[RMDB]
RNA sequence: GGGAACGACUCGAGUAGAGUCGAAAAUACGUCGCAUCCUAACAUGCCAAUCCGGAGAAUGGGGUGAAACUCCUCUGAAAUCCGGUGUUGCUUCAUUCCACACGAAGCACAAACAAACAGAAACACCUCCAUGGUAGUAGUUCGCUACUACCAUGGAAAAAGAAACAACAACAACAAC
Reactivity to DMS in 0.01 (KOAc 150mM, MgCl2 10mM, bicine 150mM(pH8.5), 24C), signal-to-noise 5, nucleotides 027 to 126: u020a100c130g020u010c070g020c070a060u000c050c040u010a040a130c170a050u050g000c030c100a150a040u020c010c010g010g000a030g000a300a030u000g000g000g020g010u000g000a050a000a270c010u000c000c000u000c000u010g000a090a300a140u000c000c000g030g000u010g010u010u010g000c040u020u000c000a160u020u010c080c080a090c100a090c160g000a030a010g000c020a040c100a090a080a070c190a090a110a070c160a060g000a090a110a050c130a060c140c060
Reactivity to 2A3 in 0.01 (KOAc 150mM, MgCl2 10mM, bicine 150mM(pH8.5), 24C), signal-to-noise 4, nucleotides 027 to 126: u110a020c040g040u020c040g030c020a040u030c010c010u050a040a040c030a100u100g040c040c010a030a030u030c010c010g020g010a000g020a040a060u300g010g000g000g000u010g010a000a000a010c030u060c010c000u000c000u020g010a050a050a000u000c000c000g000g020u010g000u000u020g000c000u020u040c000a090u140u040c040c050a080c010a000c120g010a030a000g030c040a010c020a020a070a010c020a000a070a020c050a040g150a050a100a000c040a040c000c030